[RMDB]
An RNA of 177 nucleotides, treated with DMS and 2A3 and read out base by base.
RNA sequence: GGGAACGACUCGAGUAGAGUCGAAAAUCUAAUGUCUUCGGACAUUAGAAAAGGCGGAGGCUCGCACGUAGCGACCGGCGCAAGGACGCACGUGACUGCGAAAAAUCACCGAGUUCGCUCGGUGAAAGGUAUAACGCAUGUUCGCAUGCGUUAUACCAAAAGAAACAACAACAACAAC
Reactivity to DMS in 0.01 (KOAc 150mM, MgCl2 10mM, bicine 150mM(pH8.5), 24C), signal-to-noise 3, nucleotides 027 to 126: u000c000u000a000a000u000g010u000c010u000u010c220g020g000a010c000a000u000u010a010g010a010a040a100a090g010g020c030g030g000a140g000g020c050u000c080g000c020a040c070g010u000a140g020c010g010a120c000c000g020g010c180g020c140a050a120g000g000a150c050g040c000a030c010g010u000g000a090c070u000g000c060g000a010a080a080a100a120u000c000a020c010c000g000a000g010u000u020c220g010c000u000c000g010g000u000g000a000a020a060
Reactivity to 2A3 in 0.01 (KOAc 150mM, MgCl2 10mM, bicine 150mM(pH8.5), 24C), signal-to-noise 1, nucleotides 027 to 126: u010c000u010a000a000u010g000u000c000u000u030c120g100g000a000c000a000u000u000a000g020a010a150a000a030g080g010c060g020g060a030g000g050c050u030c090g000c000a030c040g060u050a050g000c010g010a020c020c040g030g110c130g020c070a050a040g040g000a030c000g000c010a010c020g010u040g080a100c070u050g020c030g070a030a040a020a030a030u030c000a010c000c000g000a000g000u050u040c160g030c100u000c000g000g000u000g010a020a000a010

Description
Conditions: 150 mM KOAc, 10 mM MgCl2 and 150 mM bicine (pH 8.5), 24 C. For 2A3, 4,248 sequencing reads were counted. The DMS profile rests on 2,485 reads.